[RMDB]
RNA sequence: GGGAACGACUCGAGUAGAGUCGAAAAUACUUAAUCAGAUAGCUUACUGUAAAUCAUUCAUUCUGGCAUCUGAAAUGAUGAAACCAGUCUUUAUUGGCAGUAGAAGUUUCUUUGGCUUCCUUAGAAUCACUGUUUUCUUUCAGCAUGGCAAUGAUCAUCACUACUGAUAUUUCGAUAUCAGUAGUGAAAAAGAAACAACAACAACAAC
Reactivity to DMS in 0.01 (KOAc 150mM, MgCl2 10mM, bicine 150mM(pH8.5), 24C), signal-to-noise 4, nucleotides 027 to 156: u000a110c050u000u010a090a140u000c040a060g010a100u000a090g030c040u000u000a050c040u020g010u000a050a080a110u010c070a110u000u010c050a120u010u000c030u010g010g010c010a060u010c030u000g010a080a080a140u000g010a080u000g000a080a150a100c030c000a070g000u000c050u000u000u000a050u010u000g000g020c010a040g010u000a090g010a080a270g010u000u010u000c020u000u000u000g020g010c040u000u000c030c020u000u000a140g020a110a070u000c030a020c030u000g010u000u010u000u000c050u000u000u000c070a080g020c070a060u000g020g010c040a030a050u000g000a050u010c020a170
Reactivity to 2A3 in 0.01 (KOAc 150mM, MgCl2 10mM, bicine 150mM(pH8.5), 24C), signal-to-noise 8, nucleotides 027 to 156: u100a010c030u060u130a060a080u140c040a030g030a180u100a050g030c030u060u090a030c010u050g050u120a070a080a150u090c050a060u170u070c020a020u080u010c020u020g020g000c000a010u000c000u030g050a030a050a060u160g020a010u020g040a090a050a110c000c000a010g030u010c040u050u140u070a110u050u050g050g000c000a020g000u040a030g020a130a010g010u020u070u030c000u060u040u060g030g000c000u060u070c010c000u020u060a040g050a070a020u080c030a050c080u020g050u030u030u040u020c010u010u080u040c010a030g020c020a070u040g050g000c040a050a140u120g030a050u090c030a010
Conditions: 150 mM KOAc, 10 mM MgCl2 and 150 mM bicine (pH 8.5), 24 C. An RNA of 207 nucleotides, treated with DMS and 2A3 and read out base by base. The 2A3 profile rests on 7,514 reads. 2A3 is a SHAPE reagent: it acylates the 2'-hydroxyl of flexible nucleotides of all four kinds. The data come from the RNA Mapping Database (RMDB), library OK3TST.